[RMDB]
Conditions: 150 mM KOAc, 10 mM MgCl2 and 150 mM bicine (pH 8.5), 24 C. Structure probing data (DMS and 2A3) for a 177-nucleotide construct. For 2A3 the reverse transcriptase was SuperScript II with manganese. For DMS, 2,567 sequencing reads were counted.
RNA sequence: GGGAACGACUCGAGUAGAGUCGAAAAGAUAUGGAUAUACCUCUGCUGAGCGUGCGUUGAAAUCGGAAACGAUGGAGCACCCAGCAUGUAUAUCCUAAGUCAAAAGGUGUAAGUUCGCUUACACCAAGUUAUCUCUUGUCUUCGGACAAGAGAUAACAAAAGAAACAACAACAACAAC
Reactivity to DMS in 0.01 (KOAc 150mM, MgCl2 10mM, bicine 150mM(pH8.5), 24C), signal-to-noise 2, nucleotides 027 to 126: g000a030u000a300u000g010g000a010u000a000u000a010c000c010u000c000u010g000c000u000g000a100g020c260g040u000g000c020g000u000u020g020a070a110a010u000c000g000g000a110a070a160c000g000a020u000g000g000a130g000c010a000c010c010c000a000g000c000a000u010g000u000a000u000a000u000c000c000u000a000a080g010u000c020a110a070a140a120g000g020u000g010u000a000a000g010u000u000c290g000c000u000u000a010c000a000c000c000a010a030
Reactivity to 2A3 in 0.01 (KOAc 150mM, MgCl2 10mM, bicine 150mM(pH8.5), 24C), signal-to-noise 3, nucleotides 027 to 126: g040a010u080a050u160g030g000a010u010a000u000a000c000c000u020c010u020g020c010u010g040a130g160c200g040u010g020c030g180u300u080g010a010a020a010u010c010g000g020a040a040a070c010g000a000u020g000g050a010g000c000a000c010c000c010a010g000c000a000u040g010u000a010u000a000u000c000c000u010a010a010g030u010c050a010a020a080a170g030g000u000g010u000a010a020g020u050u190c300g010c190u000u000a000c000a000c000c000a000a000